[RMDB]
RNA sequence: GGGAACGACUCGAGUAGAGUCGAAAAGCUGAUCGAGAAAAUUUAAUAGUUAGAGAGACAUACUAUAUAUUGCCCCAGGCGGGAUGAAGGGGCUGAGUGGGCGCAUGCCCUCAAUGAAGCCACUUGCCGUUGUGUGUUCAUUCGUGAACACACAACGAAAAGAAACAACAACAACAAC
Reactivity to DMS in 0.01 (KOAc 150mM, MgCl2 10mM, bicine 150mM(pH8.5), 24C), signal-to-noise 3, nucleotides 027 to 126: g020c030u010g020a060u030c030g010a070g000a070a140a050a100u030u030u030a050a020u040a090g000u000u010a080g000a200g000a110g020a040c060a060u010a080c040u010a080u010a060u020a100u020u020g020c060c010c010c020a110g000g000c040g000g000g000a050u020g000a070a040g000g000g010g020c010u020g000a070g020u010g020g000g040c000g000c210a030u030g000c020c000c010u030c040a090a110u030g000a090a140g000c000c010a060c010u010u000g010c220
Reactivity to 2A3 in 0.01 (KOAc 150mM, MgCl2 10mM, bicine 150mM(pH8.5), 24C), signal-to-noise 4, nucleotides 027 to 126: g010c030u040g060a060u090c050g010a030g110a040a080a030a010u160u210u150a060a090u040a020g020u100u030a040g040a000g000a000g030a170c040a090u170a040c030u020a010u040a040u040a020u130u110g040c010c010c000c010a040g070g000c050g040g020g030a040u190g060a080a050g050g000g000g000c000u010g000a010g020u090g000g000g000c040g000c080a080u300g010c000c010c000u030c000a030a030u140g050a060a000g020c010c000a020c040u010u090g040c030